[RMDB]
RNA sequence: GGGAACGACUCGAGUAGAGUCGAAAAUGGUGAGCGGAGGCGUCGGGGGCGGUGAGACAGGCGGGAGGCCGGCCUCCAGUGGCUGGCGUGUACGAGUGGAGGCUGGCCUCCACUCACGCGUACAACGCCACUCCACCAGUUUCGACUGGUGGAGUGGAAAAGAAACAACAACAACAAC
Reactivity to 2A3 in 0.01 (KOAc 150mM, MgCl2 10mM, bicine 150mM(pH8.5), 24C), signal-to-noise 2, nucleotides 027 to 126: u110g000g020u060g010a030g030c040g000g080a080g030g020c040g020u040c090g030g000g010g020g010c030g000g020u030g020a030g030a020c070a020g040g190c030g040g000g010a000g000g000c000c010g010g000c000c000u020c000c030a060g020u060g070g010c060u080g070g050c060g040u100g010u090a130c090g030a100g090u060g000g000a000g000g000c010u010g000g000c000c000u000c000c000a000c010u010c000a010c000g100c010g000u050a050c030a090a000c040g000
Reactivity to DMS in 0.01 (KOAc 150mM, MgCl2 10mM, bicine 150mM(pH8.5), 24C), signal-to-noise 2, nucleotides 027 to 126: u020g010g000u000g030a070g030c100g010g010a130g020g010c040g000u040c110g040g000g040g000g000c060g000g000u000g000a010g020a100c060a150g000g040c100g000g020g010a030g030g000c000c040g000g000c020c000u010c000c000a070g010u040g020g000c110u010g000g000c100g000u040g020u000a100c090g000a150g000u010g020g010a040g000g000c020u000g000g000c000c040u000c000c000a040c020u010c080a050c030g040c040g000u030a110c120a130a130c140g000